[RMDB]
RNA sequence: GGGAACGACUCGAGUAGAGUCGAAAAGAUAUGGAUGGUUCAGAUGGGAGACUUGAUGUCGGAAACGACAUACAGUCGAAGAACAUCUGAGACCAUCCUAAGUCAAAGUUACGCUUCGGCGUAACAAGUAUACGAGCCUGUUCGCAGGCUCGUAUACAAAAGAAACAACAACAACAAC
Reactivity to DMS in 0.01 (KOAc 150mM, MgCl2 10mM, bicine 150mM(pH8.5), 24C), signal-to-noise 1, nucleotides 027 to 126: g030a050u000a300u010g010g030a000u000g020g000u000u020c010a030g000a030u000g000g010g040a160g020a000c010u000u000g060a010u000g020u020c000g020g020a060a070a210c030g000a020c000a020u010a060c100a040g000u000c000g000a070a140g020a180a140c010a000u000c000u010g000a060g030a060c000c010a050u000c000c000u000a000a110g000u010c030a090a100a080g000u000u000a010c010g040c000u000u010c260g020g000c010g050u000a000a000c010a030a130
Reactivity to 2A3 in 0.01 (KOAc 150mM, MgCl2 10mM, bicine 150mM(pH8.5), 24C), signal-to-noise 1, nucleotides 027 to 126: g030a040u050a030u130g020g010a000u010g030g050u020u040c010a000g010a000u020g070g000g010a100g000a010c030u090u200g010a060u010g030u000c020g020g090a020a050a080c030g030a000c000a010u060a160c000a020g040u010c090g000a110a000g030a020a040c000a000u020c020u010g020a020g090a060c010c020a010u000c000c000u000a040a000g000u010c060a170a040a110g010u020u010a020c010g030c000u000u080c300g240g010c000g000u000a000a000c010a000a030
Structure probing data (DMS and 2A3) for a 177-nucleotide construct. Reactivities are given for positions 27 through 126. For 2A3 the reverse transcriptase was SuperScript II with manganese. As a SHAPE reagent, 2A3 marks flexible, mostly unpaired nucleotides at the ribose 2'-OH. For 2A3, 2,875 sequencing reads were counted. Conditions: 150 mM KOAc, 10 mM MgCl2 and 150 mM bicine (pH 8.5), 24 C. The DMS profile rests on 1,173 reads.